RNA sequence: GGGAACGACUCGAGUAGAGUCGAAAAAGAGGCGAUACGUCGCCUCAAGCUUGGUGCUUAGCUUCUUUCACCAAGCAUAUUACACGCGGACAACCGCCAAAGGAGAAACACUGACUACGGUCAGUGAGGAAGUUGGUUCGGUUCGCCGAACCAACAAGCUAUGCAAACCGUUCGCGGUUUGCAUAGCAAAAGAAACAACAACAACAAC
Reactivity to 2A3 in 0.01 (KOAc 150mM, MgCl2 10mM, bicine 150mM(pH8.5), 24C), signal-to-noise 1, nucleotides 027 to 156: a000g010a020g000g010c010g000a030u040a090c300g090u000c000g000c000c000u000c010a000a000g000c000u020u020g020g000u020g030c060u060u010a070g050c010u040u020c000u020u000u020c000a000c000c000a000a000g020c000a020u040a040u020u170a070c100a000c000g060c010g020g020a040c020a140a300c030c000g040c020c000a040a020a000g000g000a040g050a000a050a030c000a000c020u000g000a000c000u000a010c130g110g000u000c010a000g000u020g010a020g010g040a070a200g000u010u000g000g010u000u000c000g000g000u000u010c090g010c090c000g010a000a000c010c000a000a000c000a000a000